This 177-nucleotide RNA was probed chemically with 2A3 and DMS. Source: RMDB library OK2TRN, as collected in RNAgym. Values cover nucleotides 27 to 126. For DMS the reverse transcriptase was MarathonRT. For 2A3 the reverse transcriptase was SuperScript II with manganese.

RNA sequence: GGGAACGACUCGAGUAGAGUCGAAAACUCACUCUCAGACAGAGAGAGAGUGAGACACUCACACUCACACACAGUGUGACUGAGUGACUCACAGACAGUGUGUGAGACUCUCAGUCACUCUCUGUCAGUUAGUACCAUGGUUCGCCAUGGUACUAACAAAAGAAACAACAACAACAAC
Reactivity to 2A3 in 0.01 (KOAc 150mM, MgCl2 10mM, bicine 150mM(pH8.5), 24C), signal-to-noise 7, nucleotides 027 to 126: c000u010c010a020c010u010c000u000c010a040g020a110c000a020g040a010g010a010g000a000g000a000g030u000g000a010g030a010c060a030c030u120c010a040c000a010c020u080c010a050c000a010c000a020c060a190g070u030g000u000g120a010c010u020g010a010g020u020g050a080c010u000c010a000c000a000g280a120c070a100g130u120g030u000g000u010g300a000g010a030c000u000c000u000c000a010g030u000c000a010c000u000c000u000c010u000g020u000c010a040
Reactivity to DMS in 0.01 (KOAc 150mM, MgCl2 10mM, bicine 150mM(pH8.5), 24C), signal-to-noise 5, nucleotides 027 to 126: c020u000c010a080c080u000c030u000c050a170g020a010c030a020g000a060g000a060g010a010g000a030g020u000g000a020g010a130c160a080c070u000c070a080c150a110c060u000c030a020c110a100c180a070c190a100g010u000g020u000g010a020c030u000g010a020g000u000g000a140c030u000c000a010c000a040g000a180c210a100g000u010g020u000g010u000g010a020g000a100c050u000c000u000c000a010g000u000c000a030c010u000c010u000c000u000g010u000c040a150